[RMDB]
RNA sequence: GGGAACGACUCGAGUAGAGUCGAAAAAUGUGCGUACAUACGUGUAUGCAUACACAUGAUGUCCAUGUUUAUUACACCUAUAUACAAGUGGUGCGUGAAAAAGCUCAUCAGGUGCAAUAAAAAUACCAAUACCCUCCUCAUUCGUGAGGAGGGUAUUAAAAGAAACAACAACAACAAC
Reactivity to DMS in 0.01 (KOAc 150mM, MgCl2 10mM, bicine 150mM(pH8.5), 24C), signal-to-noise 3, nucleotides 027 to 126: a060u000g010u000g010c020g060u010a000c000a020u000a060c170g040u000g030u000a010u000g000c020a030u000a020c110a030c050a020u010g010a110u000g010u000c070c050a060u010g000u000u000u000a050u000u000a030c030a010c010c000u000a130u000a110u010a150c290a100a100g020u010g010g020u000g020c080g000u000g000a030a080a080a150a130g010c040u010c000a020u000c080a050g000g020u000g000c020a030a020u020a000a010a040a090a080u000a070c100c110
Reactivity to 2A3 in 0.01 (KOAc 150mM, MgCl2 10mM, bicine 150mM(pH8.5), 24C), signal-to-noise 2, nucleotides 027 to 126: a000u060g000u000g030c010g010u020a000c000a020u030a040c210g080u020g010u010a010u010g000c040a010u070a060c050a000c000a030u120g030a080u070g120u080c070c000a010u100g080u030u060u000a070u040u020a020c010a000c000c010u100a090u040a040u010a230c100a120a080g040u030g040g000u040g040c020g000u110g030a170a070a020a080a010g010c010u000c020a040u040c070a020g000g020u030g000c030a000a010u090a070a040a060a010a010u210a080c080c000

Structure probing data (DMS and 2A3) for a 177-nucleotide construct. For 2A3 the reverse transcriptase was SuperScript II with manganese. For DMS, 2,061 sequencing reads were counted.